[RMDB]
RNA sequence: GGGAACGACUCGAGUAGAGUCGAAAACGCGCUGAGAUUGCUGUAAGCGCCAUUGGUUUUCAAGAUGAAGGCGGUUUACGUGAUGCUAGUUUUAUCAAUAAGGUAGCUCUAACCCCUAAGAGUAGUACGUAACGCUUAUUUUCGAAUAAGCGUUACGAAAAGAAACAACAACAACAAC
Reactivity to 2A3 in 0.01 (KOAc 150mM, MgCl2 10mM, bicine 150mM(pH8.5), 24C), signal-to-noise 2, nucleotides 027 to 126: c040g040c000g000c020u010g010a020g000a190u060u130g050c070u080g010u050a020a020g000c000g000c000c030a110u070u090g110g000u020u040u050u290c060a050a070g040a160u160g080a040a070g030g030c050g050g040u060u040u040a020c010g020u060g030a030u090g060c020u020a080g080u050u030u040u010a120u070c080a080a050u100a170a020g130g000u050a010g000c000u000c010u030a070a090c000c000c000c010u030a050a010g020a010g050u070a040g010u000a080
Reactivity to DMS in 0.01 (KOAc 150mM, MgCl2 10mM, bicine 150mM(pH8.5), 24C), signal-to-noise 4, nucleotides 027 to 126: c130g000c100g030c010u000g010a120g010a170u010u010g020c040u030g010u000a150a030g010c010g010c010c110a080u000u020g020g020u000u000u000u000c110a080a120g000a120u010g010a100a090g010g010c040g000g020u000u000u000a060c110g000u000g020a040u000g010c030u010a050g020u000u000u010u000a200u020c110a050a080u010a080a090g010g010u010a040g000c000u010c010u000a080a100c080c010c010c050u000a050a060g030a090g000u000a080g010u000a120
Source information
Chemical mapping of a 177-nucleotide RNA with 2A3 and DMS. For 2A3 the reverse transcriptase was SuperScript II with manganese. The 2A3 profile rests on 1,633 reads.